Background
Source: RMDB library OK2TRN, as collected in RNAgym. This 177-nucleotide RNA was probed chemically with DMS and 2A3. For 2A3, 1,105 sequencing reads were counted. The DMS profile rests on 1,059 reads. Values cover nucleotides 27 to 126.
RNA sequence: GGGAACGACUCGAGUAGAGUCGAAAAUGACAUCAGCAGCGCACACGACAUUAAUAGUCCCAAUACCUAAGUUUGGUGCACUAUCUAACACCACAACAUCAUAACUAUCCCAGACUGACUCAAUAGCUCUCAUUUGAGCAUUCGUGCUCAAAUGAGAAAAAGAAACAACAACAACAAC
Reactivity to DMS in 0.01 (KOAc 150mM, MgCl2 10mM, bicine 150mM(pH8.5), 24C), signal-to-noise 2, nucleotides 027 to 126: u010g040a060c090a020u000c050a040g010c040a030g000c070g000c050a050c040a060c150g000a080c070a050u010u010a080a060u000a130g000u000c020c010c050a000a110u040a060c080c070u000a070a120g000u000u020u000g010g030u000g050c090a080c040u010a060u000c050u010a080a070c050a040c020c010a030c060a030a050c090a050u000c060a050u000a130a090c160u020a060u000c010c010c010a080g030a050c090u000g000a020c090u000c050a040a070u000a110g000c130
Reactivity to 2A3 in 0.01 (KOAc 150mM, MgCl2 10mM, bicine 150mM(pH8.5), 24C), signal-to-noise 1, nucleotides 027 to 126: u110g020a000c000a050u020c030a000g010c000a000g030c030g040c050a040c030a000c040g110a020c020a030u120u060a050a080u030a050g020u060c000c000c010a000a000u090a040c000c010u120a050a140g030u030u030u080g050g010u010g040c030a020c000u050a030u060c080u050a020a010c010a010c030c000a020c010a060a000c000a020u040c010a000u000a170a060c020u000a040u090c000c000c010a020g100a030c090u050g020a070c000u000c120a020a070u030a080g020c010